[RMDB]
RNA sequence: GGGAACGACUCGAGUAGAGUCGAAAAAUUUAACAGGUAAAACAGCACCAGGAAGUCUUGCUCCUGUUUUGCAAAGGCACAUUUAGAGAGUGACAGAGGUUUCCCACUGUGUCUGGGACAAGCCUCCCAGUGUGUCUGGGACAAGCCUGAAAAGAGAAUCGAGUCAUACUUUCGAGUAUGACUCGAUAAAAGAAACAACAACAACAAC
Reactivity to 2A3 in 0.01 (KOAc 150mM, MgCl2 10mM, bicine 150mM(pH8.5), 24C), signal-to-noise 1, nucleotides 027 to 156: a000u130u180u090a060a050c040a010g000g020u110a100a030a050a050c010a040g010c000a000c020c050a010g040g000a050a040g030u090c060u130u060g050c050u000c000c000u020g120u100u100u150u270g040c080a050a040a000g020g000c000a000c000a020u020u080u160a120g060a030g020a040g070u060g030a020c040a040g030a050g090g020u000u050u020c000c030c000a030c020u030g000u010g030u000c070u050g000g000g010a000c010a010a020g000c010c010u020c000c000c000a050g010u060g010u000g040u100c010u010g000g000g030a010c030a080a030g020c000c010u010g040a040a080a000a000g160a020g080a070
Reactivity to DMS in 0.01 (KOAc 150mM, MgCl2 10mM, bicine 150mM(pH8.5), 24C), signal-to-noise 1, nucleotides 027 to 156: a070u020u000u010a030a300c040a010g000g020u010a050a050a080a180c040a060g000c040a050c080c000a140g010g000a070a060g020u000c040u000u000g040c040u000c030c000u000g020u000u000u020u000g120c060a020a090a070g040g000c010a050c030a040u000u000u020a220g010a160g000a100g010u000g010a110c090a180g010a120g040g000u000u010u000c000c000c000a170c060u000g070u000g040u000c030u000g040g000g020a020c050a030a080g020c080c000u000c000c020c030a050g050u020g060u000g030u020c010u000g000g000g000a110c080a060a190g030c000c000u000g030a020a090a010a110g000a160g000a210

Chemical mapping of a 207-nucleotide RNA with 2A3 and DMS.
Conditions: 150 mM KOAc, 10 mM MgCl2 and 150 mM bicine (pH 8.5), 24 C.
Reactivities are given for positions 27 through 156.